The record gives the reactivity of an RNA of 177 nucleotides to DMS and 2A3. For DMS, 967 sequencing reads were counted. The reactions ran in a buffer of 150 mM KOAc, 10 mM MgCl2 and 150 mM bicine (pH 8.5), at 24 C. The 2A3 profile rests on 1,309 reads. Values cover nucleotides 27 to 126. It was measured as part of the RMDB library OK2TRN.
RNA sequence: GGGAACGACUCGAGUAGAGUCGAAAACGGGAAAUGACUUCGGGUACCGAGAGCUGCACGGGAUAGCGUUCGCUUACCGGCAAUUCGCCCUGCGCCUGCGGGGUCUGACAGUCGUCGAGGUCGACCACGCACAACUUCGGUUCGCCGAAGUUGUGCGAAAAGAAACAACAACAACAAC
Reactivity to DMS in 0.01 (KOAc 150mM, MgCl2 10mM, bicine 150mM(pH8.5), 24C), signal-to-noise 1, nucleotides 027 to 126: c230g030g000g010a060a070a020u010g000a020c020u000u000c040g000g000g010u010a060c070c020g010a090g020a040g030c080u000g000c010a080c010g000g010g020a170u000a050g020c020g000u010u010c180g000c000u000u000a300c060c010g000g050c000a020a050u000u000c020g000c000c000c020u000g000c000g020c220c250u000g000c010g020g020g000g010u000c060u000g010a170c200a080g030u000c030g010u000c020g000a020g010g000u000c020g000a140c040c080a140
Reactivity to 2A3 in 0.01 (KOAc 150mM, MgCl2 10mM, bicine 150mM(pH8.5), 24C), signal-to-noise 1, nucleotides 027 to 126: c050g070g010g000a030a100a150u170g000a030c000u020u000c000g000g060g020u070a020c010c000g030a000g000a010g000c060u030g000c100a140c270g000g010g010a070u190a110g010c010g090u240u180c090g000c020u050u050a040c000c040g010g000c000a000a030u070u000c030g000c000c000c000u020g000c060g060c010c080u110g000c020g050g000g000g000u090c070u120g060a040c030a020g000u050c000g050u040c020g010a010g000g050u070c010g000a030c030c000a030